RNA sequence: GGGAACGACUCGAGUAGAGUCGAAAAUCUCUCUGGUGUCUCUUCUUAGGAGAGCACUAAUCCCAUGAUGAGAGUUCACCCUCAUGACCUCAUCUAAACCUGAUUGUCUCCCAAAGGUCCAUUUCCAAAUACCAUCACAUUAGAGGUUAAGGGUUCACUCAUUAUACCUGUUCGCAGGUAUAAUGAGAAAAGAAACAACAACAACAAC
Reactivity to 2A3 in 0.01 (KOAc 150mM, MgCl2 10mM, bicine 150mM(pH8.5), 24C), signal-to-noise 5, nucleotides 027 to 156: u030c010u000c000u000c030u070g060g000u020g170u080c010u020c010u060u020c030u050u070a100g110g000a000g010a010g010c000a010c000u020a030a090u030c010c010c010a030u110g020a030u020g000a020g000a000g020u080u080c030a050c020c020c000u050c050a070u110g020a020c000c010u010c000a030u040c060u090a070a050a080c000c030u070g060a140u090u130g090u040c050u040c020c040c000a050a070a020g030g010u030c040c000a070u060u060u060c010c030a050a060a040u110a060c030c030a080u090c030a040c020a140u090u160a070g010a020g050g020u030u060a050a030g030g010g000u020u040c030a040
Reactivity to DMS in 0.01 (KOAc 150mM, MgCl2 10mM, bicine 150mM(pH8.5), 24C), signal-to-noise 3, nucleotides 027 to 156: u000c020u000c010u010c020u020g020g020u000g010u000c000u000c010u000u000c210u010u020a140g020g010a020g020a050g020c010a010c010u000a100a220u000c020c010c000a140u010g000a060u010g010a030g000a100g010u020u010c060a060c020c030c020u000c070a080u000g000a020c020c020u000c010a070u000c040u000a080a070a060c040c020u000g010a080u010u010g000u000c030u000c010c000c020a040a140a120g000g030u000c020c010a110u000u000u000c060c020a050a080a100u000a050c040c020a080u000c060a070c050a100u020u000a110g010a060g010g000u000u000a080a130g020g020g000u000u000c050a190